This 177-nucleotide RNA was probed chemically with 2A3 and DMS. 2A3 adducts were read by reverse transcription with SuperScript II with manganese. Reactivities are rounded to 0.1 and cut off at 0 and 3. The RNA was probed in 150 mM KOAc, 10 mM MgCl2 and 150 mM bicine (pH 8.5) at 24 C. The data come from the RNA Mapping Database (RMDB), library 15KREP.
[RMDB]
RNA sequence: GGGAACGACUCGAGUAGAGUCGAAAAUUGUAGUCACUCCUCUUGUUUCAGCAGGCAUAUUUGGUGUAAAACCAGCUGUGUCUUUUGAUUAUCUUAUUAGGGAGGCUAAGACUAGAGUUUUAGUCGUGAACAUUAAAAUGUUCGCAUUUUAAUGUUCAAAAGAAACAACAACAACAAC
Reactivity to 2A3 in 0.01 (KOAc 150mM, MgCl2 10mM, bicine 150mM(pH8.5), 24C), signal-to-noise 4, nucleotides 027 to 126: u010u020g140u040a000g010u010c010a010c050u020c010c000u060c020u070u060g050u060u060u010c000a010g010c000a000g010g000c000a000u010a010u030u020u020g040g000u030g020u080a130a180a020a010c000c000a000g010c010u010g000u000g000u010c000u020u030u010u000g010a020u020u090a080u100c060u080u120a150u130u170a100g020g010g010a010g000g020c020u080a100a030g000a000c000u010a010g010a020g080u010u010u030u040a070g010u060c060g090u020
Reactivity to DMS in 0.01 (KOAc 150mM, MgCl2 10mM, bicine 150mM(pH8.5), 24C), signal-to-noise 6, nucleotides 027 to 126: u000u000g000u000a020g000u010c010a140c130u000c000c000u000c080u000u000g000u000u000u000c010a010g020c110a020g010g000c000a000u000a010u000u000u000g010g000u000g000u010a100a090a150a020c000c000a010g010c080u000g030u000g010u000c000u000u000u000u000g000a030u010u000a050u010c100u010u000a130u010u010a130g010g000g000a040g000g010c220u010a060a090g010a020c000u000a020g000a050g010u000u000u000u000a120g010u010c100g010u000